[RMDB]
This 177-nucleotide RNA was probed chemically with DMS and 2A3.
RNA sequence: GGGAACGACUCGAGUAGAGUCGAAAAUGAACGCUGGCACGCAGCAGGACCAGCAGCACCUGCAUGCAGGGAGGCCACACAGGCACGCUAGAGAUCCUGCAGAGACACCCAGGUCGCUGCCUGCCUGUGGCUGUGUAAAGUUCGCUUUACACAGCCAAAAAGAAACAACAACAACAAC
Reactivity to DMS in 0.01 (KOAc 150mM, MgCl2 10mM, bicine 150mM(pH8.5), 24C), signal-to-noise 3, nucleotides 027 to 126: u010g010a120a060c160g020c060u010g000g020c020a150c150g020c110a120g000c020a030g020g020a080c080c080a230g020c000a040g020c040a040c010c000u000g000c050a130u000g010c020a080g010g000g000a080g000g000c020c010a110c170a120c160a090g010g020c000a070c110g000c110u000a080g020a180g020a070u010c020c010u030g020c080a080g000a120g000a090c160a080c130c140c010a010g000g010u000c100g030c010u000g000c020c020u000g000c000c030u000g010
Reactivity to 2A3 in 0.01 (KOAc 150mM, MgCl2 10mM, bicine 150mM(pH8.5), 24C), signal-to-noise 1, nucleotides 027 to 126: u110g000a070a000c050g010c040u050g070g050c070a000c060g020c030a020g010c000a020g040g050a060c090c030a010g040c000a000g020c020a040c000c010u040g000c020a080u010g030c010a010g050g010g030a030g100g000c020c040a090c040a000c010a050g010g000c030a020c150g060c080u110a030g000a010g000a190u050c010c000u010g000c010a010g030a010g000a090c040a050c050c020c000a020g050g000u000c090g030c020u010g000c000c000u010g000c000c000u020g000

The RNA was probed in 150 mM KOAc, 10 mM MgCl2 and 150 mM bicine (pH 8.5) at 24 C.